[RMDB]
Description:
Chemical mapping of a 207-nucleotide RNA with DMS and 2A3. For 2A3 the reverse transcriptase was SuperScript II with manganese. For 2A3, 1,963 sequencing reads were counted. The data come from the RNA Mapping Database (RMDB), library M2RFPK.
RNA sequence: GGGAACGACUCGAGUAGAGUCGAAAAUCAUUGAGAUGCUGGGCGCUAUGGUCGUCCUCCUCCAGCUGACCUCCUUCUCAGCUGCUGACCGGCGCCGCACAGGCGGCAUCUCAGCUUCGUGUGCAAAAAAAGAAUGGUCGGUUCGCCGACCAUUCAACUUACUAGUGAUCUUCGGAUCACUAGUAAGAAAAGAAACAACAACAACAAC
Reactivity to DMS in 0.01 (KOAc 150mM, MgCl2 10mM, bicine 150mM(pH8.5), 24C), signal-to-noise 2, nucleotides 027 to 156: u000c080a120u010u000g010a040g000a020u010g010c000u000g000g010g000c010g020c020u030a060u020g050g020u010c000g000u010c050c030u000c000c000u010c030c010a040g000c010u000g010a040c050c080u010c130c100u010u010c080u000c000a020g010c010u000g020c050u010g010a040c010c010g000g000c010g040c020c010g020c080a090c110a100g030g030c020g020g020c000a010u000c010u000c010a020g010c060u010u000c110g020u010g000u020g000c030a000a010a060a150a090a140a240g000a030a010u000g010g030u000c000g020g010u010u000c300g040c000c010g010a010c000c000a000u000u000c000a060a140
Reactivity to 2A3 in 0.01 (KOAc 150mM, MgCl2 10mM, bicine 150mM(pH8.5), 24C), signal-to-noise 3, nucleotides 027 to 156: u150c020a050u080u070g000a000g000a000u010g000c010u050g010g010g000c030g010c000u100a180u300g020g000u010c020g050u060c020c030u020c000c000u020c010c000a000g000c000u000g010a020c010c060u140c030c030u240u060c020u020c020a010g000c000u000g010c100u130g000a000c000c020g010g010c000g000c010c020g000c000a040c020a020g170g020c020g010g000c010a000u020c000u010c010a000g000c030u200u220c060g120u090g040u060g130c080a060a100a010a010a000a000a060g010a000a000u000g010g000u000c010g020g050u060u090c230g000c040c000g000a000c000c000a000u000u000c000a010a000